[RMDB]
RNA sequence: GGGAACGACUCGAGUAGAGUCGAAAAUAUUUGAACGUUCUGCCGGAAUGCAUUAUCAAUAGAGGUAAAGUCGCAACCCCAAAUCGUAAAGGAAACCGUAGCACGUCUUAAGCAAGAACGUGCUGCGGAUUUAGACACUGUUCGCAGUGUCUAAAUCAAAAGAAACAACAACAACAAC
Reactivity to DMS in 0.01 (KOAc 150mM, MgCl2 10mM, bicine 150mM(pH8.5), 24C), signal-to-noise 9, nucleotides 027 to 126: u030a070u010u010u010g010a070a100c070g010u000u000c030u010g010c070c050g010g010a080a060u010g010c070a080u010u010a050u010c060a070a110u020a080g010a080g000g010u000a030a050a060g010u000c040g010c050a060a100c040c000c020c050a050a080a080u030c100g000u010a050a070a110g010g010a060a070a160c030c000g010u000a000g010c000a000c000g010u000c010u000u000a090a150g020c240a040a020g000a040a020c000g020u000g000c000u000g000c000g000
Reactivity to 2A3 in 0.01 (KOAc 150mM, MgCl2 10mM, bicine 150mM(pH8.5), 24C), signal-to-noise 9, nucleotides 027 to 126: u160a050u070u110u160g060a090a030c040g020u030u020c020u040g070c020c020g030g070a090a040u090g040c050a050u040u100a060u170c040a060a130u070a160g090a050g070g050u070a070a040a040g020u030c020g010c040a050a090c010c000c000c030a010a050a060u120c080g090u140a080a050a070g070g050a110a040a010c010c000g000u000a000g000c000a000c010g010u000c010u070u090a170a100g090c070a030a020g050a070a020c000g000u000g000c000u000g000c000g000
About this RNA:
This 177-nucleotide RNA was probed chemically with DMS and 2A3. Conditions: 150 mM KOAc, 10 mM MgCl2 and 150 mM bicine (pH 8.5), 24 C. Source: RMDB libraries RFM100 and RFMREP, as collected in RNAgym. DMS adducts were read by reverse transcription with MarathonRT.